[RMDB]
RNA sequence: GGGAACGACUCGAGUAGAGUCGAAAAGAUAUGGACGUCCUCCCCACCUCCGAAGAGCGUUUGACGUAAGCUAGCGUCGGAAACGACGCUAGCUUACCGAGCUUCAAGGAGAGGGACGUCCUAAGUCGACACAUAACCAGUUCGCUGGUUAUGUGUCAAAAGAAACAACAACAACAAC
Reactivity to DMS in 0.01 (KOAc 150mM, MgCl2 10mM, bicine 150mM(pH8.5), 24C), signal-to-noise 1, nucleotides 027 to 126: g000a130u020a080u020g000g020a000c000g030u010c000c020u000c290c010c020c080a300c080c000u000c000c000g020a300a160g010a010g000c000g020u000u030u050g050a260c300g000u000a000a000g010c000u000a010g000c000g020u000c040g000g050a020a090a200c000g000a000c000g010c010u000a000g020c000u030u000a000c000c000g000a100g000c010u000u000c010a030a300g000g000a000g010a110g020g000g000a010c000g030u000c000c010u020a010a200g010u010c130